Structure probing data (2A3 and DMS) for a 207-nucleotide construct. It was measured as part of the RMDB library RSTRND. The reactions ran in a buffer of 150 mM KOAc, 10 mM MgCl2 and 150 mM bicine (pH 8.5), at 24 C. 2A3 adducts were read by reverse transcription with SuperScript II with manganese.
RNA sequence: GGGAACGACUCGAGUAGAGUCGAAAAGGCAUGUCGAGGACCCGUCACCUCGUUAAUCAAUGGGAAAAUCGUAACUGCAAACGACGAUACGUUCGCACUGGCAGCCUAAGGGCCGCCGUCCUCUGCCUAGUUCACUGACGGGCUAGUGUCGCAAGACGACCAGAUUAACGUUCGCGUUAAUCUGGUCAAAAGAAACAACAACAACAAC
Reactivity to 2A3 in 0.01 (KOAc 150mM, MgCl2 10mM, bicine 150mM(pH8.5), 24C), signal-to-noise 4, nucleotides 027 to 156: g040g000c060a030u080g030u150c020g000a010g000g010a020c000c010c000g010u010c010a020c010c000u020c020g050u040u050a080a030u080c070a010a050u080g040g030g020a060a040a000a080u180c070g000u060a050a080c070u090g010c090a120a060a040c050g050a010c050g030a090u090a080c030g020u030u050c040g000c070a030c050u070g020g000c000a000g010c010c010u100a120a100g040g000g000c010c010g000c020c020g020u050c010c020u050c030u010g010c000c000u030a050g060u100u090c070a040c170u100g020a040c060g010g000g000c000u020a040g000u040g070u130c030g000c080a050a030g030a040c030
Reactivity to DMS in 0.01 (KOAc 150mM, MgCl2 10mM, bicine 150mM(pH8.5), 24C), signal-to-noise 1, nucleotides 027 to 156: g030g020c020a050u000g010u010c010g030a090g050g000a050c010c000c020g030u030c040a130c020c000u020c010g020u000u000a070a070u000c060a140a070u000g000g000g000a080a080a100a080u020c070g000u000a060a130c070u010g010c040a040a030a020c060g020a090c040g000a140u000a070c040g000u010u000c030g020c070a050c070u020g020g000c000a000g010c190c020u010a100a150g040g000g000c000c000g090c060c010g010u000c010c040u000c050u000g000c030c010u000a070g010u010u000c000a100c090u000g000a020c000g030g010g050c050u000a010g000u000g000u000c020g040c090a090a190g000a130c170